[RMDB]
RNA sequence: GGGAACGACUCGAGUAGAGUCGAAAAGGACAUGCCUAAUGGCGAGUGCGGACAUCAUUGCUGGGCUGACAGUGGGAGUAAUGGCGGUGCCUCAGUCUGUCUCAUUCGCUGCCAUGGCGGGUCUGCCUACGCAAAGCAGGUUCGCCUGCUUUGCGUAAAAAGAAACAACAACAACAAC
Reactivity to DMS in 0.01 (KOAc 150mM, MgCl2 10mM, bicine 150mM(pH8.5), 24C), signal-to-noise 1, nucleotides 027 to 126: g020g030a010c030a060u000g010c030c020u010a300a140u000g000g010c020g000a040g000u010g010c180g020g020a050c020a020u020c150a050u020u000g000c140u000g010g010g010c020u000g000a040c080a050g000u010g020g000g020a100g010u000a030a040u000g000g010c030g020g020u010g000c040c030u010c020a050g010u000c130u000g000u010c010u000c000a000u000u000c020g000c010u000g020c100c060a100u000g010g030c000g030g000g030u010c010u000g000c050c010
Reactivity to 2A3 in 0.01 (KOAc 150mM, MgCl2 10mM, bicine 150mM(pH8.5), 24C), signal-to-noise 1, nucleotides 027 to 126: g010g010a010c010a000u060g040c000c000u060a080a040u080g020g000c000g010a010g040u040g000c140g020g010a010c010a010u110c020a030u080u170g100c060u050g000g030g000c000u010g010a030c020a070g060u090g040g140g050a100g100u140a090a030u040g080g020c050g080g000u150g200c010c000u040c000a010g040u040c010u000g010u000c000u020c030a050u030u020c010g000c000u010g000c000c030a060u100g000g000c000g050g000g020u000c010u000g000c030c000